[RMDB]
RNA sequence: GGGAACGACUCGAGUAGAGUCGAAAAUGGCGGGGGAGAAACAGGAUCGACAAGGGUGUAAAGAUCGCUCUUUUACUCGGCAUGAUACCACCGUUAUCGGGUCAACAGAGUAGUUGCAAAUGACAACAAAAGAAUCGCGCGUUCGCGCGCGAUUCAACCUUAGUAUAGUCUUCGGACUAUACUAAGGAAAAGAAACAACAACAACAAC
Reactivity to 2A3 in 0.01 (KOAc 150mM, MgCl2 10mM, bicine 150mM(pH8.5), 24C), signal-to-noise 3, nucleotides 027 to 156: u110g030g000c040g000g020g000g010g000a030g060a010a060a010c030a020g020g020a070u030c040g050a030c040a070a050g020g040g000u050g030u100a080a100a020g040a040u100c040g010c040u040c010u020u090u030u080a090c040u030c010g000g000c010a020u060g000a010u050a030c010c010a000c000c020g090u060u040a050u120c030g000g000g010u010c000a000a020c030a060g110a040g060u140a020g000u030u020g040c040a040a120a280u140g050a140c020a070a000c010a010a120a010a060g000a010a000u000c000g000c010g000c010g020u050u030c140g020c010g000c000g000c000g080a000u010u000c010a000a000
Reactivity to DMS in 0.01 (KOAc 150mM, MgCl2 10mM, bicine 150mM(pH8.5), 24C), signal-to-noise 1, nucleotides 027 to 156: u000g020g030c060g020g000g020g070g020a070g020a120a070a020c100a130g040g000a070u000c010g020a070c080a050a110g010g030g020u000g010u000a040a050a090g020a120u000c050g000c040u010c030u000u000u000u000a060c030u000c040g000g000c000a060u010g020a100u030a090c030c030a190c020c000g040u000u000a040u010c130g030g000g020u010c040a000a120c140a080g020a030g020u000a160g010u000u010g000c000a080a150a180u000g020a090c060a030a110c060a030a060a080a100g010a050a030u000c000g100c010g050c000g090u010u000c300g030c060g000c030g040c000g050a010u010u000c000a040a090